[RMDB]
RNA sequence: GGGAACGACUCGAGUAGAGUCGAAAAAGGUGGGGGAUACAUCCAGGUUGAGUGUGCCUUAUGUAGGAUUGGCAUCAGCAUAUAAUUGUUUUUAUGAUGGUUACUCACAUGAUGAUGCAGAAACUCACUGCGGGAGGUGAUUCGUCACCUCCCGCAGAAAAGAAACAACAACAACAAC
Reactivity to 2A3 in 0.01 (KOAc 150mM, MgCl2 10mM, bicine 150mM(pH8.5), 24C), signal-to-noise 1, nucleotides 027 to 126: a000g180g000u000g000g020g000g020g020a030u030a030c000a000u000c010c000a000g010g040u170u190g020a030g110u090g000u030g020c000c000u100u030a300u080g080u000a110g060g060a260u090u110g000g130c000a000u000c030a000g050c020a020u070a060u000a100a170u110u090g180u260u000u100u090u000a110u230g090a000u000g050g060u000u110a030c000u000c000a000c000a180u060g050a080u110g000a000u030g000c000a000g060a050a000a000c000u000c000a000

An RNA of 177 nucleotides, treated with 2A3 and read out base by base. The 2A3 profile rests on 322 reads. For 2A3 the reverse transcriptase was SuperScript II with manganese.